[RMDB]
RNA sequence: GGGAACGACUCGAGUAGAGUCGAAAAAAAUUACGCUUAGAUAUGAGAGAGAUUCCUAAGUCUUCAAUUAAACCAGAACAUUUUCAUUUAAUGUACUUAUUAGAACAACAUUCUCCAUAUUUUAUAGUGAUGAGAAACCGUUCGCGGUUUCUCAUCAAAAAGAAACAACAACAACAAC
Reactivity to 2A3 in 0.01 (KOAc 150mM, MgCl2 10mM, bicine 150mM(pH8.5), 24C), signal-to-noise 2, nucleotides 027 to 126: a000a020a000u300u160a060c050g000c010u050u070a040g040a030u000a020u000g120a180g000a000g030a010g120a300u020u060c000c000u000a000a000g000u000c050u030u140c120a030a000u000u030a000a060a090c130c160a150g130a220a060c100a200u160u110u010u000c000a050u040u030u030a020a030u010g040u060a000c000u000u090a050u040u190a120g060a040a030c020a010a020c000a200u150u020c000u010c020c010a030u000a040u010u150u010u000a170u090a100g020
An RNA of 177 nucleotides, treated with 2A3 and read out base by base. High 2A3 reactivity points to a flexible backbone, as in loops and unpaired stretches. Reactivities are given for positions 27 through 126. The reactions ran in a buffer of 150 mM KOAc, 10 mM MgCl2 and 150 mM bicine (pH 8.5), at 24 C. 2A3 adducts were read by reverse transcription with SuperScript II with manganese.